[RMDB]
RNA sequence: GGGAACGACUCGAGUAGAGUCGAAAAAAAAAAGAUAUGGACUCACCGGCAGCUAUGAAGCAUGUAACAAGUACUCGGAAACGAGUACCGCCCAUGUGGAGCUGCGGUGAGUCCUAAGUCAAAAAAACAUUACUGAUGAGUUCGCUCAUCAGUAAUGAAAAGAAACAACAACAACAAC
Reactivity to 2A3 in 0.01 (KOAc 150mM, MgCl2 10mM, bicine 150mM(pH8.5), 24C), signal-to-noise 2, nucleotides 027 to 126: a000a000a000a000a000a000g000a000u020a000u060g010g000a000c000u020c000a010c040c040g300g040c020a010g000c000u040a140u300g000a020a000g030c010a000u030g060u080a250a130c160a160a300g000u010a000c000u000c000g000g010a000a020a030c010g000a000g020u010a000c000c010g130c010c150c000a000u000g000u030g000g030a030g000c000u000g000c020g020g020u030g000a000g000u000c000c000u000a010a000g010u020c000a060a000a000a000a000a030a100
Reactivity to DMS in 0.01 (KOAc 150mM, MgCl2 10mM, bicine 150mM(pH8.5), 24C), signal-to-noise 2, nucleotides 027 to 126: a000a050a080a060a080a090g000a040u000a170u000g000g000a040c010u000c000a000c000c000g070g050c000a010g010c010u000a240u020g000a110a150g000c000a000u010g000u000a120a070c270a090a080g000u000a000c020u000c010g020g010a050a030a040c010g020a010g010u000a000c000c120g030c300c200c020a020u000g020u000g000g020a000g000c000u000g030c020g000g010u000g000a000g010u000c000c000u010a010a020g000u020c010a000a000a080a080a030a050a160